[RMDB]
RNA sequence: GGGAACGACUCGAGUAGAGUCGAAAAUCCUAAGUCGAAGAUUGUCAGAUCGGAUGGGAGCGAAGAACUGGUCGGAAACGACCAGGGAGCUCCCUGACGAUCUUGGAUUUAUCUUCGAUAUGGAAAAGACAAAGUAGACUUCGGUCUACUUUGUCAAUCUAAGAUCCAUGUUCGCAUGGAUCUUAGAAAAAGAAACAACAACAACAAC
Reactivity to DMS in 0.01 (KOAc 150mM, MgCl2 10mM, bicine 150mM(pH8.5), 24C), signal-to-noise 2, nucleotides 027 to 156: u000c010c010u000a130a300g010u000c000g000a010a020g000a050u000u010g020u000c010a050g020a030u000c030g040g000a300u010g010g010g010a000g040c010g010a170a150g020a100a190c040u000g000g010u000c000g000g000a150a130a300c020g010a010c010c000a010g000g020g000a300g020c010u000c000c000c000u010g040a300c050g000a010u000c000u000u000g020g010a030u000u030u000a060u010c000u000u000c020g000a010u000a110u010g010g010a110a110a190a190g000a020c000a030a050a050g020u000a020g020a030c000u000u010c300g060g010u010c010u000a000c020u000u010u000g020u010c000a030a030
Reactivity to 2A3 in 0.01 (KOAc 150mM, MgCl2 10mM, bicine 150mM(pH8.5), 24C), signal-to-noise 3, nucleotides 027 to 156: u030c000c010u020a060a030g010u000c000g010a000a000g000a010u000u040g010u020c010a000g000a020u000c010g020g000a020u060g020g000g000a000g000c000g130a300a040g010a060a020c000u000g000g000u000c000g000g020a110a070a110c010g000a010c010c010a000g000g000g010a010g030c000u020c010c000c010u010g000a000c000g010a000u000c000u000u030g010g010a000u160u200u190a020u000c000u010u000c000g000a000u010a040u050g010g010a030a130a080a070g000a000c000a000a000a010g000u000a000g000a010c020u060u100c300g030g000u010c010u000a000c000u000u000u000g010u000c000a000a000